[RMDB]
RNA sequence: GGGAACGACUCGAGUAGAGUCGAAAAGAAUAUAAAGCGCGAGGGACCAAUUGCGAGCGACCUCGCGCCACCAGCUGUCGACUCACCAAGCGCGCAGCCAGCUGGAGGUUACGCUCGCAACAGAAGACAUGGGAUCAUGCUUCGGCAUGAUCCCAUGAAAAGAAACAACAACAACAAC
Reactivity to 2A3 in 0.01 (KOAc 150mM, MgCl2 10mM, bicine 150mM(pH8.5), 24C), signal-to-noise 1, nucleotides 027 to 126: g000a110a000u300a000u090a080a090a000g000c000g000c000g000a000g180g020g060a130c000c140a250a220u200u140g000c000g040a000g000c000g000a000c010c000u000c000g000c000g000c000c000a000c000c000a010g110c000u080g070u270c090g100a300c000u010c020a080c090c000a030a120g080c020g000c000g020c080a020g000c090c000a000g080c000u000g000g080a010g000g240u120u020a000c000g000c000u000c000g040c000a000a000c000a030g060a120a000g120a030
Chemical mapping of a 177-nucleotide RNA with 2A3. The data come from the RNA Mapping Database (RMDB), library OK1LIB. For 2A3 the reverse transcriptase was SuperScript II with manganese. For 2A3, 518 sequencing reads were counted. The reactions ran in a buffer of 150 mM KOAc, 10 mM MgCl2 and 150 mM bicine (pH 8.5), at 24 C.